[RMDB]
RNA sequence: GGGAACGACUCGAGUAGAGUCGAAAAAUCCUCAGGUUCAUAAGCGUGAUGAUUGGGUGUUCAUGCUCCAUGCAUGACAUGUGCCUUCUUUGAACCUUGUUACGACCUUGGCACAUUACCCAUCUGAAAAAGACGUUCGCGUUCGCGCGAACGUCAACGCCAUAACAAACUUCGGUUUGUUAUGGCGAAAAGAAACAACAACAACAAC
Reactivity to 2A3 in 0.01 (KOAc 150mM, MgCl2 10mM, bicine 150mM(pH8.5), 24C), signal-to-noise 1, nucleotides 027 to 156: a000u020c000c000u000c040a000g000g020u000u020c000a020u020a300a060g060c140g160u120g120a020u140g030a030u160u260g000g000g020u060g030u170u020c010a010u000g010c020u050c120c070a160u300g000c000a010u020g000a000c010a000u010g010u000g000c000c020u050u000c030u000u020u020g000a000a000c020c000u060u080g090u030u180a070c090g080a140c030c070u040u120g000g000c020a000c010a000u020u140a040c000c000c000a000u000c010u000g020a130a040a000a000a040g030a010c000g000u000u000c020g010c010g030u050u050c180g000c000g010c000g130a000a000c000g000u020c000a000a000